[RMDB]
RNA sequence: GGGAACGACUCGAGUAGAGUCGAAAAUCGCGGCUGCCGUGUUCGCCGGCUGGCUGCCCGAGGGCGCUCUGGCCGUCAUCCUGCCGCUGAUCAUGGCCGUGCUCUACGUGGACAAGACCGGCGCGCCGGCACGUCUCAUGUUCGCAUGAGACGUGCCAAAAGAAACAACAACAACAAC
Reactivity to DMS in 0.01 (KOAc 150mM, MgCl2 10mM, bicine 150mM(pH8.5), 24C), signal-to-noise 2, nucleotides 027 to 126: u000c130g010c050g020g010c030u010g000c000c020g030u010g020u000u000c030g010c050c010g010g030c030u000g030g020c110u000g010c040c010c010g000a070g010g000g000c040g020c080u000c260u010g000g010c000c010g030u000c120a030u000c020c050u010g000c050c060g010c030u020g000a010u000c200a070u010g020g040c020c020g000u010g010c020u000c010u000a060c030g040u030g030g000a120c000a100a120g000a100c020c000g010g010c000g020c220g000c040c080
Reactivity to 2A3 in 0.01 (KOAc 150mM, MgCl2 10mM, bicine 150mM(pH8.5), 24C), signal-to-noise 2, nucleotides 027 to 126: u090c020g000c020g030g000c020u080g050c010c040g070u080g040u150u070c020g000c020c000g040g010c000u020g100g040c080u110g050c000c000c000g020a020g010g010g010c040g000c050u100c150u130g000g030c010c020g000u000c010a030u040c010c040u120g050c030c040g000c080u020g010a000u030c040a060u020g030g000c030c030g020u020g030c010u000c010u030a250c040g040u230g010g020a030c010a080a020g070a170c020c000g000g020c000g000c000g000c010c020